[RMDB]
RNA sequence: GGGAACGACUCGAGUAGAGUCGAAAAUGGACUAGCCCUGAAAAUGGAUGACGCUAGCAGUGGAUAGUCGAUGCCCAAUCGUUAAAAGAAGUGAUAAUACUUUUAACGUGUAGGAAGGCGUGAAGGUCGUGACAGAUCCAUUCGUGGAUCUGUCACGAAAAGAAACAACAACAACAAC
Reactivity to DMS in 0.01 (KOAc 150mM, MgCl2 10mM, bicine 150mM(pH8.5), 24C), signal-to-noise 2, nucleotides 027 to 126: u030g000g020a030c000u010a000g020c010c000c000u030g000a040a030a110a190u010g000g000a180u000g000a130c120g040c020u010a060g040c010a020g000u020g010g000a000u010a020g000u010c010g020a090u000g010c000c000c000a120a170u020c000g010u000u010a000a000a040a010g010a140a090g000u020g010a160u030a230a090u010a120c000u000u000u000u000a000a020c010g010u030g010u030a130g040g010a070a070g000g010c150g000u020g000a060a160g000g000u020